[RMDB]
RNA sequence: GGGAACGACUCGAGUAGAGUCGAAAAAAGAAGCUAAGAUUUACCCCUGCAACCACACCGAGGGAAUGGCAGAAAGGGAAAGGCCCACAGAUCAUUCUUUCAUAUGAUGUCAGAGAAUGGCUCUGCAAUCUGGGAUGAUAUUCGUAUCAUCCCAGAUAAAAGAAACAACAACAACAAC
Reactivity to 2A3 in 0.01 (KOAc 150mM, MgCl2 10mM, bicine 150mM(pH8.5), 24C), signal-to-noise 3, nucleotides 027 to 126: a000a030g080a060a000g040c090u130a120a040g010a300u060u020u210a100c020c020c010c020u020g010c030a030a080c010c010a040c030a100c090c050g030a220g030g000g000a040a050u090g020g000c020a000g090a180a140a070g040g000g020a150a070a040g100g030c000c000c000a030c030a030g040a050u030c000a020u010u000c000u040u050u050c060a040u080a160u280g220a050u150g120u110c050a010g010a000g000a080a060u050g020g000c040u000c000u040g040c040a010
Reactivity to DMS in 0.01 (KOAc 150mM, MgCl2 10mM, bicine 150mM(pH8.5), 24C), signal-to-noise 3, nucleotides 027 to 126: a050a140g010a090a100g020c090u010a050a080g000a140u000u000u000a190c090c010c020c050u000g010c060a160a070c020c030a040c080a050c110c120g010a080g000g000g000a070a050u020g000g000c040a050g000a060a140a110g010g010g000a070a100a140g000g000c010c000c020a120c070a060g000a050u000c010a040u000u020c040u000u000u020c080a070u020a090u000g000a080u000g020u000c140a030g000a010g000a090a030u000g010g020c170u000c020u000g000c200a130